[RMDB]
Chemical mapping of a 207-nucleotide RNA with 2A3 and DMS. The 2A3 profile rests on 1,863 reads. The DMS profile rests on 4,444 reads. 2A3 adducts were read by reverse transcription with SuperScript II with manganese. It was measured as part of the RMDB library OK3TST. Reactivities are given for positions 27 through 156. Conditions: 150 mM KOAc, 10 mM MgCl2 and 150 mM bicine (pH 8.5), 24 C.
RNA sequence: GGGAACGACUCGAGUAGAGUCGAAAAUUUGCGUAUUAAUCUGGACCGCACUCAGAGCUUAGAUCAUCUGAGCAGCUCUUUGUCUGUUAUGGCGGUCGGCAGCAGGGAAGUGCCAUAUCAAAACAAAGGUUGGCCCACUGGAUAGUGGAUGCCAUCAAUUAGGGACUAUGUUCGCAUAGUCCCUAAUAAAAGAAACAACAACAACAAC
Reactivity to 2A3 in 0.01 (KOAc 150mM, MgCl2 10mM, bicine 150mM(pH8.5), 24C), signal-to-noise 3, nucleotides 027 to 156: u060u050u080g010c010g060u110a050u070u140a150a100u080c070u040g070g020a010c010c010g000c000a010c020u010c000a010g010a040g050c080u130u160a040g030a170u140c030a040u030c060u040g000a010g030c010a000g000c010u010c020u110u070u080g060u010c010u000g040u070u050a080u110g070g000c010g000g000u000c020g010g000c010a050g020c030a010g000g060g030a080a060g040u040g000c020c010a070u090a020u130c100a030a080a020a120c010a030a070a070g130g000u020u010g010g000c030c000c020a000c020u080g070g130a090u160a220g010u020g010g010a050u160g000c000c010a010u040c030a000
Reactivity to DMS in 0.01 (KOAc 150mM, MgCl2 10mM, bicine 150mM(pH8.5), 24C), signal-to-noise 2, nucleotides 027 to 156: u000u010u000g030c030g000u000a110u010u000a110a160u000c040u000g000g030a040c010c020g010c070a170c000u010c020a030g000a060g020c090u010u000a140g000a130u000c100a170u000c040u020g010a060g030c040a090g010c070u000c040u000u020u000g020u000c030u020g030u000u000a050u000g030g030c030g020g030u000c030g040g030c060a150g000c080a130g000g020g000a120a100g030u000g000c000c000a050u000a080u000c070a050a050a070a080c060a080a060a070g020g030u000u010g030g010c000c010c010a040c050u010g040g030a120u000a070g030u000g020g010a120u000g030c000c010a060u000c060a080